[RMDB]
RNA sequence: GGGAACGACUCGAGUAGAGUCGAAAAGCAAAGGUCGCUCCACAGGAUCUCUUGACACCAUGGCUCGUGGUCGUCCAUUUGCAAACAUGGACUUCCCCUUCAGCGGAAGAGAACCCCGGACUGGUCAAUACGGACGAGGCACCACCCUCCAACGGUGCCCAUAACACACAUUCGUGUGUGUUAUGGGAAAAGAAACAACAACAACAAC
Reactivity to 2A3 in 0.01 (KOAc 150mM, MgCl2 10mM, bicine 150mM(pH8.5), 24C), signal-to-noise 6, nucleotides 027 to 156: g030c030a060a010a010g030g020u030c020g020c050u040c020c010a030c030a040g050g060a100u020c050u010c030u090u140g060a070c040a050c100c040a070u100g090g000c020u050c100g030u040g010g020u030c030g010u010c010c020a090u060u060u120g100c070a080a080a040c050a070u050g010g010a020c000u030u030c000c010c000c010u110u170c070a050g020c050g060g010a020a000g020a030g020a070a060c020c000c010c010g030g030a050c030u070g000g030u070c050a060a090u090a160c070g030g000a010c030g030a060g030g000c020a030c020c010a020c020c010c000u060c010c020a050a040c050g050g010u060g010
Reactivity to DMS in 0.01 (KOAc 150mM, MgCl2 10mM, bicine 150mM(pH8.5), 24C), signal-to-noise 3, nucleotides 027 to 156: g030c040a060a080a090g000g020u000c030g030c020u010c010c020a080c070a110g010g010a100u000c040u000c050u010u020g010a150c010a060c000c020a110u010g010g050c030u000c080g050u000g040g040u000c100g020u000c020c020a050u000u000u000g020c140a080a060a080c190a110u010g000g000a050c000u000u000c000c000c000c030u000u020c070a130g020c040g000g000a100a080g020a080g010a080a060c030c000c020c010g010g020a140c050u000g020g060u000c060a080a140u000a110c030g030g000a100c070g010a110g030g010c030a030c040c010a140c040c000c010u010c020c040a040a150c070g020g020u000g040
Structure probing data (2A3 and DMS) for a 207-nucleotide construct. High DMS reactivity at an A or C suggests that its Watson-Crick edge is free. The reactions ran in a buffer of 150 mM KOAc, 10 mM MgCl2 and 150 mM bicine (pH 8.5), at 24 C. It was measured as part of the RMDB library OK3TST. For DMS, 5,630 sequencing reads were counted.